Chemical mapping of a 177-nucleotide RNA with 2A3 and DMS.
RNA sequence: GGGAACGACUCGAGUAGAGUCGAAAAGAUAUGGAACGAUCAUAAGGUAGAGCGUUCAUCGGAAACGAUGAACCGGCUCUAUAAUCUUAUGAGUCGUUCCUAAGUCAAACCUUCCUUCGGGAAGGAACGUAAAGCAACAGUUCGCUGUUGCUUUACGAAAAGAAACAACAACAACAAC
Reactivity to 2A3 in 0.01 (KOAc 150mM, MgCl2 10mM, bicine 150mM(pH8.5), 24C), signal-to-noise 1, nucleotides 027 to 126: g000a000u080a040u170g010g010a000a010c000g000a000u000c020a000u020a030a000g070g020u020a000g030a000g000c010g010u010u000c010a000u000c000g020g030a100a070a060c010g000a020u000g000a000a010c030c000g150g010c010u040c000u020a000u030a020a040u010c010u000u000a000u030g040a050g060u030c000g010u000u000c000c000u000a000a010g000u030c050a080a080a150c000c000u020u040c010c010u000u100c300g170g000g010a030a000g010g010a020a000
Reactivity to DMS in 0.01 (KOAc 150mM, MgCl2 10mM, bicine 150mM(pH8.5), 24C), signal-to-noise 3, nucleotides 027 to 126: g000a050u000a300u010g020g000a000a000c020g030a080u000c010a000u000a010a020g010g010u000a010g020a020g050c020g000u000u000c000a010u020c000g020g010a200a120a210c020g030a020u000g010a010a010c080c300g040g050c000u000c010u000a030u020a300a110u010c010u000u000a000u000g010a030g010u000c000g000u000u000c000c000u030a000a070g000u000c050a040a120a120c010c000u010u000c000c000u000u000c220g030g000g010a010a030g010g000a000a040
For DMS, 2,526 sequencing reads were counted. For 2A3 the reverse transcriptase was SuperScript II with manganese.